Source information: An RNA of 177 nucleotides, treated with 2A3 and DMS and read out base by base. 2A3 adducts were read by reverse transcription with SuperScript II with manganese.
[RMDB]
RNA sequence: GGGAACGACUCGAGUAGAGUCGAAAAGUAAAGGCGGAGGAGGGUUUUGGCUUGCGCUCGGUCGGCCCGCGCGUGGUGUGGGCUGGAAUUCGUGUGUGGAGGAUGAUUAAUGCCGCGCGCCCAGGAAAGUAUUAGUCAUAUUCGUAUGACUAAUACUAAAAGAAACAACAACAACAAC
Reactivity to 2A3 in 0.01 (KOAc 150mM, MgCl2 10mM, bicine 150mM(pH8.5), 24C), signal-to-noise 8, nucleotides 027 to 126: g050u070a040a080a060g060g020c090g030g070a040g050g050a050g010g040g000u020u020u050u040g020g000c000u030u040g030c050g000c070u000c000g010g010u010c000g000g020c000c000c000g000c000g000c010g020u080g000g020u060g020u060g030g050g010c080u050g040g080a070a080u150u100c070g020u110g020u040g020u080g140g060a070g030g000a030u050g010a010u080u240a130a040u110g020c000c000g000c010g000c000g000c000c020c000a050g060g040a170a150
Reactivity to DMS in 0.01 (KOAc 150mM, MgCl2 10mM, bicine 150mM(pH8.5), 24C), signal-to-noise 9, nucleotides 027 to 126: g010u010a070a120a160g000g010c110g000g010a090g010g010a090g010g010g010u000u000u000u000g010g000c040u000u000g010c130g010c020u000c020g000g010u000c020g010g000c010c000c010g010c030g010c040g030u000g010g020u000g020u000g000g010g010c050u000g000g000a100a100u010u000c090g020u010g010u010g010u000g000g000a100g000g000a100u000g000a100u010u010a080a070u000g000c010c010g010c040g010c030g010c010c080c060a080g000g010a100a080
It was measured as part of the RMDB library M2PK90. For 2A3, 23,686 sequencing reads were counted.